[RMDB]
RNA sequence: GGGAACGACUCGAGUAGAGUCGAAAAGACCUUACUAACUUGGGAACUCAUUAACUUGGGUCGGGCUCGGGCGGGUGGGCUAAGGGUAAACCGCACUCAGGGCUCAAACCGGGUCUAGGGUAAGUCACAAUGUUAUGAAUUUCGAUUCAUAACAUUGAAAAGAAACAACAACAACAAC
Reactivity to 2A3 in 0.01 (KOAc 150mM, MgCl2 10mM, bicine 150mM(pH8.5), 24C), signal-to-noise 6, nucleotides 027 to 126: g030a040c010c020u090u080a100c080u120a250a100c030u090u080g050g000g040a090a020c010u020c040a070u120u090a110a060c240u040u020g020g000g010u030c020g000g020g020c070u060c090g030g030g100c210g050g030g250u300g070g010g000c040u070a100a040g020g000g000u010a070a040a020c020c010g000c010a010c010u020c030a030g010g030g000c010u000c000a120a100a130c060c030g020g000g000u000c020u050a070g040g010g020u050a070a040g010u010c010a010
Reactivity to DMS in 0.01 (KOAc 150mM, MgCl2 10mM, bicine 150mM(pH8.5), 24C), signal-to-noise 5, nucleotides 027 to 126: g010a130c070c050u010u010a110c120u020a090a110c080u010u010g010g010g010a270a050c020u000c020a070u000u000a080a080c070u010u000g010g000g000u000c040g010g000g000c060u000c050g030g010g000c220g040g010g010u020g030g010g010c110u010a020a020g000g000g010u000a000a060a070c060c030g010c110a030c020u010c020a180g000g000g010c020u000c040a020a050a100c140c080g010g010g010u000c020u000a100g000g000g000u000a050a080g010u000c120a110
Structure probing data (2A3 and DMS) for a 177-nucleotide construct.
The DMS profile rests on 5,296 reads.